Chemical mapping of a 177-nucleotide RNA with DMS. Source: RMDB library OK2TST, as collected in RNAgym. DMS (dimethyl sulfate) methylates the pairing face of unpaired adenines and cytosines. The RNA was probed in 150 mM KOAc, 10 mM MgCl2 and 150 mM bicine (pH 8.5) at 24 C.

[RMDB]
RNA sequence: GGGAACGACUCGAGUAGAGUCGAAAAGUCUUUGCACCCAGAUAGACGACCGGCAGGCCGACGCCCUUGGCUUCCGACAGGAAAAUGCCAUCAUGCCGGGCAAGACCGGCAGCAAAGGCAUUGACGAAAAAUAAUGCGACUUCGGUCGCAUUAUUUUAAAAGAAACAACAACAACAAC
Reactivity to DMS in 0.01 (KOAc 150mM, MgCl2 10mM, bicine 150mM(pH8.5), 24C), signal-to-noise 1, nucleotides 027 to 126: g020u000c010u000u000u010g000c100a190c040c050c030a120g010a170u000a100g000a090c030g000a080c080c030g000g000c120a000g000g020c040c010g000a170c060g000c050c090c030u000u000g030g020c030u010u020c010c020g040a110c280a080g020g000a000a030a030a010u000g020c020c020a040u030c180a030u000g040c000c020g010g030g050c110a100a110g000a220c010c000g020g020c010a020g010c160a050a100a070g000g000c020a020u000u010g000a200c180g000a000